RNA sequence: GGGAACGACUCGAGUAGAGUCGAAAAGAUAUGGACGCUGACCACGGUGAACUACACUCCUGUCUAUCCUAAUGUCGGAAACGACAUUAGGAUAGACAGAGAGUGCACUAUCAAGCGUCCUAAGUCAUCCACUCAUAAAGUUCGCUUUAUGAGUGGAAAAAGAAACAACAACAACAAC
Reactivity to 2A3 in 0.01 (KOAc 150mM, MgCl2 10mM, bicine 150mM(pH8.5), 24C), signal-to-noise 2, nucleotides 027 to 126: g040a030u150a070u270g010g010a020c000g000c030u010g060a010c010c080a150c300g020g020u030g030a060a030c020u230a070c270a020c000u010c010c000u010g000u000c000u000a000u020c000c000u010a000a000u000g020u010c000g010g050a150a090a120c020g000a000c000a010u010u000a000g000g000a000u000a010g000a000c000a000g000a000g010a000g000u000g010c000a000c000u140a130u180c100a160a030g000c000g000u000c000c000u000a030a010g030u010c000a090
Reactivity to DMS in 0.01 (KOAc 150mM, MgCl2 10mM, bicine 150mM(pH8.5), 24C), signal-to-noise 4, nucleotides 027 to 126: g010a060u010a300u000g000g020a030c000g030c010u000g000a220c300c300a110c170g000g010u000g000a080a040c100u000a300c000a000c000u000c010c000u000g000u000c000u000a000u010c010c000u000a000a010u000g010u000c000g000g000a130a110a280c000g000a010c000a000u010u000a000g000g000a010u000a010g000a010c020a010g020a030g000a000g000u000g000c000a010c040u000a170u000c130a150a040g000c010g040u000c000c000u000a010a070g020u000c070a210